[RMDB]
Chemical mapping of a 177-nucleotide RNA with 2A3 and DMS. Source: RMDB library M2PK50, as collected in RNAgym. Conditions: 150 mM KOAc, 10 mM MgCl2 and 150 mM bicine (pH 8.5), 24 C.

RNA sequence: GGGAACGACUCGAGUAGAGUCGAAAACAUGGAUCGUUCGCGAUCCAUGGCAGGUGGUGGUGGGACCAGCCGACCGAGGCUUUUGGCAUCCCAGCCUUUCCAAUCCAGCCUAUUUCGAUAGGCUGAAGCAACACUAUUGUUUCGACAAUAGUGUUGCAAAAGAAACAACAACAACAAC
Reactivity to 2A3 in 0.01 (KOAc 150mM, MgCl2 10mM, bicine 150mM(pH8.5), 24C), signal-to-noise 3, nucleotides 027 to 126: c000a000u010g000g000a010u000c010g000u120u040c200g010c010g110a000u000c000c000a010u000g000g000c090a030g060g100u090g040g030u080g030g260u080g010g000g040a040c010c010a020g010c010c010g070a170c080c110g070a180g040g030c010u140u070u200u210g000g000c000a050u030c000c020c000a020g010c000c000u000u030u030c020c020a020a060u060c040c010a000g000c000c010u020a020u020u090u070c200g100a030u000a020g010g000c000u000g000a000a020
Reactivity to DMS in 0.01 (KOAc 150mM, MgCl2 10mM, bicine 150mM(pH8.5), 24C), signal-to-noise 4, nucleotides 027 to 126: c000a000u000g000g010a010u000c010g020u000u010c180g030c010g020a000u000c000c000a000u000g000g020c180a060g010g020u010g010g020u000g020g040u000g010g010g010a150c020c020a050g010c010c010g000a080c270c250g020a130g000g010c020u000u010u000u010g000g010c050a090u000c030c010c010a160g000c010c010u000u000u010c010c000a150a150u010c110c010a010g000c000c000u000a010u000u000u010c190g010a020u000a000g000g000c000u010g000a040a070